[RMDB]
RNA sequence: GGGAACGACUCGAGUAGAGUCGAAAAAUGUUUCCACACAUUUGUCUAUGUUAACUCAUUGUGCUUAACCUUGAGCUCUUGCAGAUCCCAAGCACACACAUGGUGUGCCCUGUCCUUUUAGGUGACACCAACACGGUAUGACACAAAUGCAAACUGGACUAUCAGCCUUGUUCGCAAGGCUGAUAGUAAAAGAAACAACAACAACAAC
Reactivity to 2A3 in 0.01 (KOAc 150mM, MgCl2 10mM, bicine 150mM(pH8.5), 24C), signal-to-noise 4, nucleotides 027 to 156: a000u060g010u000u040u050c050c010a030c000a000c000a060u020u090u100g060u030c060u070a120u080g020u160u060a280a240c000u030c050a070u020u040g040u050g070c080u140u180a080a090c000c000u010u030g020a010g020c000u010c000u040u080g000c030a000g020a120u000c000c000c020a030a010g050c030a010c000a000c000a000c040a180u100g140g000u010g020u020g000c020c000c000u050g040u030c000c000u070u070u060u180a060g010g050u090g070a010c010a000c140c000a070a030c050a010c090g050g020u080a100u200g060a030c030a010c020a110a110a030u140g000c040a100a090a070c040u110g040g000
Reactivity to DMS in 0.01 (KOAc 150mM, MgCl2 10mM, bicine 150mM(pH8.5), 24C), signal-to-noise 1, nucleotides 027 to 156: a080u030g000u000u020u000c030c030a100c220a100c040a120u010u010u000g000u010c050u000a150u010g010u060u010a040a100c050u000c000a060u000u000g020u010g010c060u010u020a160a020c060c040u010u000g000a080g020c000u000c030u000u000g090c000a090g010a090u000c010c000c020a260a300g010c030a010c030a040c040a140c200a100u010g020g000u010g000u000g010c010c010c060u000g010u000c070c060u000u000u000u000a090g000g000u000g010a040c060a070c000c000a020a020c010a080c070g040g060u000a010u010g000a030c100a120c000a090a080a070u000g020c040a040a040a120c060u000g010g000

Annotation
Conditions: 150 mM KOAc, 10 mM MgCl2 and 150 mM bicine (pH 8.5), 24 C. The record gives the reactivity of an RNA of 207 nucleotides to 2A3 and DMS.